[RMDB]
RNA sequence: GGGAACGACUCGAGUAGAGUCGAAAAUGGCGUAGGCAAAGGCAUUCAGUACGUAUCUAAUGCCAACAUGGUCCUUGCGGCACUCUUGGCAAUUUUCGUAUUCGUUUUGGGACCGACCGUCACCAUCCAAAAGUGAAUCGUUCGCGAUUCACUUUUGAAAAGAAACAACAACAACAAC
Reactivity to DMS in 0.01 (KOAc 150mM, MgCl2 10mM, bicine 150mM(pH8.5), 24C), signal-to-noise 5, nucleotides 027 to 126: u010g010g020c020g040u010a120g020g000c070a100a100a130g010g000c020a050u000u000c150a030g010u000a090c240g010u010a040u010c020u010a040a040u000g010c010c010a040a070c180a070u000g020g000u000c010c020u000u000g020c090g010g000c070a060c060u000c140u000u000g000g000c040a030a060u010u000u010u010c040g030u000a050u010u010c130g020u000u000u000u010g010g010g010a110c020c020g000a080c130c030g000u010c150a070c030c020a070u020c100
Reactivity to 2A3 in 0.01 (KOAc 150mM, MgCl2 10mM, bicine 150mM(pH8.5), 24C), signal-to-noise 4, nucleotides 027 to 126: u060g020g000c030g020u060a040g020g020c100a060a060a050g070g000c010a020u020u030c040a020g030u090a090c100g100u080a080u060c040u050a090a020u030g000c030c030a020a000c040a080u140g020g000u010c000c000u030u150g020c060g010g000c020a030c070u070c020u050u110g020g020c000a090a100u080u050u050u080c050g050u080a070u050u060c070g030u020u010u170u110g110g010g040a080c020c010g020a030c050c000g000u040c010a030c080c010a050u080c030